This 207-nucleotide RNA was probed chemically with 2A3 and DMS. For DMS the reverse transcriptase was MarathonRT. It was measured as part of the RMDB library RNAMAK. Reactivities are rounded to 0.1 and cut off at 0 and 3.
[RMDB]
RNA sequence: GGGAACGACUCGAGUAGAGUCGAAAAGCGUACUACCAAAGCUUUUGACGAACGCAUUGCCGAAGGCUCCCAAAUAGGAGCCUAUAGACAGCAAUGGCGUUCGAUAAGCUUUGGUAUCGCAAACACCGAUAGACUUCUUCGGAAGUCUAUCGGUGAACUCGUAAAAAAGGUUCGCCUUUUUUACGAGAAAAGAAACAACAACAACAAC
Reactivity to 2A3 in 0.01 (KOAc 150mM, MgCl2 10mM, bicine 150mM(pH8.5), 24C), signal-to-noise 3, nucleotides 027 to 156: g000c000g010u100a070c050u000a000c040c000a000a000a000g000c050u090u090u100u110g210a120c020g000a010a000c000g010c000a000u010u000g010c000c020g050a050a030g010g010c020u050c040c010c020a190a250a020u280a100g000g010a020g000c000c020u010a020u010a020g050a020c050a030g010c020a000a000u030g130g070c010g020u000u000c000g000a000u010a010a010g000c020u000u000u010g000g000u020a000u000c000g010c000a030a040a010c000a000c010c000g000a000u000a000g000a000c000u000u000c020u060u060c300g050g010a000a000g030u000c000u000a000u000c000g000g000u000g000a000a010
Reactivity to DMS in 0.01 (KOAc 150mM, MgCl2 10mM, bicine 150mM(pH8.5), 24C), signal-to-noise 1, nucleotides 027 to 156: g000c030g010u000a090c100u000a000c000c010a030a010a050g000c000u010u010u000u030g030a290c130g040a010a000c000g000c000a020u000u000g020c000c010g020a190a070g020g000c010u010c000c000c000a010a160a270u020a090g000g070a020g040c010c010u010a020u000a140g020a300c190a040g000c000a000a020u010g020g060c000g040u000u000c000g000a060u010a050a030g050c000u010u000u030g030g020u000a000u000c010g020c020a170a080a190c000a000c000c000g010a030u020a020g000a050c010u030u000c000u030u030c300g030g000a010a030g010u000c010u000a000u000c000g000g000u000g000a000a020
Background:
The 2A3 profile rests on 2,402 reads. The RNA was probed in 150 mM KOAc, 10 mM MgCl2 and 150 mM bicine (pH 8.5) at 24 C. For DMS, 2,359 sequencing reads were counted.